[RMDB]
RNA sequence: GGGAACGACUCGAGUAGAGUCGAAAACCAUGAGACCGUAACUUUCGUAGUCAUUGAUAAAGGGGCAGGUCUCGCUCUUUUGUCAUUGCGGUUGCCUAGAGGCAUGGUCGUUUACCGCGACUGUCCAAUACGAAGAGGGCCUUCGGGCCCUCUUCAAUCAGUCUUUACUGUUCGCAGUAAAGACUGAAAAAGAAACAACAACAACAAC
Reactivity to 2A3 in 0.01 (KOAc 150mM, MgCl2 10mM, bicine 150mM(pH8.5), 24C), signal-to-noise 2, nucleotides 027 to 156: c010c010a050u060g080a000g020a010c030c020g070u060a050a100c040u080u180u110c090g030u050a050g110u100c080a150u070u080g020a000u020a010a030a000g020g000g000g020c040a050g070g120u090c040u050c070g020c000u000c000u000u010u010u000g000u030c010a030u020u050g000c010g040g000u010u060g070c030c000u120a080g010a110g080g030c060a040u130g030g000u000c000g000u050u060u150a130c050c010g000c020g000a000c010u010g010u000c010c020a020a020u040a110c060g000a010a000g000a010g000g000g020c000c000u030u060c140g040g010g000c030c010c000u000c000u000u000c000a000a000
Reactivity to DMS in 0.01 (KOAc 150mM, MgCl2 10mM, bicine 150mM(pH8.5), 24C), signal-to-noise 1, nucleotides 027 to 156: c020c020a070u000g000a070g010a010c000c010g030u000a140a100c120u010u030u010c090g010u000a160g030u020c170a140u000u000g000a020u000a010a020a000g010g020g010g000c000a070g030g040u010c030u010c030g020c000u010c000u020u000u000u000g030u000c020a110u000u000g020c020g000g010u000u020g020c010c030u000a130g000a150g000g000c090a070u000g060g040u000c000g060u000u000u010a130c280c130g000c010g000a050c000u000g010u000c010c020a130a140u000a170c110g040a030a030g000a060g000g000g000c000c000u000u000c300g050g040g010c000c010c000u000c000u000u010c000a010a130

Source: RMDB library M2RFPK, as collected in RNAgym.
Chemical mapping of a 207-nucleotide RNA with 2A3 and DMS.
Values cover nucleotides 27 to 156.